[RMDB]
RNA sequence: GGGAACGACUCGAGUAGAGUCGAAAAAAACCUUCAUCUUCACAUUUGGUUUCUAGACCAUCUACCUCAUCUAGAAGGAGAGCAAUUAGUGAGACAGGUAUAUAUGAAUAUUUAUUUGACGCAUUCACACAGCUUUUUGAUAUUCUUUCUCUAAUGACGUAGAACCUUCUUUCGAGAAGGUUCUACGAAAAGAAACAACAACAACAAC
Reactivity to 2A3 in 0.01 (KOAc 150mM, MgCl2 10mM, bicine 150mM(pH8.5), 24C), signal-to-noise 2, nucleotides 027 to 156: a010a000a010c010c010u070u040c080a150u050c030u290u130c000a020c000a100u130u110u050g020g030u020u070u090c050u060a050g000a080c000c000a030u030c010u070a160c000c010u040c030a090u110c050u080a040g030a050a040g130g020a050g010a000g000c000a010a120u110u090a110g020u000g000a020g010a030c010a010g060g040u010a070u010a010u010a050u150g020a010a010u030a050u040u200u010a090u110u110u060g000a040c000g010c040a050u050u100c050a060c020a020c030a090g050c000u130u050u070u040u100g010a020u020a030u030u070c000u000u050u060c010u080c150u230a150a090u300g030a000
Source information:
This 207-nucleotide RNA was probed chemically with 2A3. It was measured as part of the RMDB library OK3TST.